The data come from the RNA Mapping Database (RMDB), library ARCHII. Chemical mapping of a 207-nucleotide RNA with 2A3 and DMS. For DMS the reverse transcriptase was MarathonRT. The reactions ran in a buffer of 150 mM KOAc, 10 mM MgCl2 and 150 mM bicine (pH 8.5), at 24 C. 2A3 adducts were read by reverse transcription with SuperScript II with manganese.
[RMDB]
RNA sequence: GGGAACGACUCGAGUAGAGUCGAAAAAACACCGCGGUGACAGUCCACUCGUGCGGGAAACCCACGAUGCUGGUGUUGUCUUGAGCAAUGAAGAUGAUUUCUUGAGGGAGGUUUCACUCUGCAGAGAGCUCUUCACCUUAGUGUGGCGGUAUUGAAUAGCAUAUAGCUUGUUCGCAAGCUAUAUGCUAAAAGAAACAACAACAACAAC
Reactivity to 2A3 in 0.01 (KOAc 150mM, MgCl2 10mM, bicine 150mM(pH8.5), 24C), signal-to-noise 1, nucleotides 027 to 156: a000a000c120a050c040c010g000c110g050g060u090g010a000c000a000g060u020c000c000a000c000u000c020g030u010g000c220g000g000g000a010a020a040c000c020c000a010c010g030a060u170g030c230u000g000g000u020g010u090u030g000u000c000u010u090g030a010g000c000a020a020u000g000a000a000g010a000u090g020a060u230u300u000c020u050u050g020a160g010g030g030a010g000g040u100u180u250c100a160c010u000c010u060g030c010a000g000a000g010a010g050c000u000c010u020u020c000a080c040c000u040u030a040g010u070g050u080g300g000c000g000g030u020a110u030u220g060a070a160u000
Reactivity to DMS in 0.01 (KOAc 150mM, MgCl2 10mM, bicine 150mM(pH8.5), 24C), signal-to-noise 1, nucleotides 027 to 156: a080a030c020a080c000c010g050c010g000g020u010g000a090c050a300g000u000c040c030a010c000u000c050g020u000g000c150g020g000g010a080a070a190c010c010c010a000c030g000a100u000g000c010u010g080g030u000g020u000u010g010u020c010u000u000g010a100g040c070a150a070u000g000a030a040g010a040u010g030a060u010u010u000c020u010u010g010a150g040g060g020a030g000g000u010u020u010c120a120c040u000c000u000g000c030a180g010a060g000a010g010c000u000c000u020u000c040a040c060c040u030u000a080g020u010g000u010g000g060c010g030g000u000a050u000u000g010a120a190u000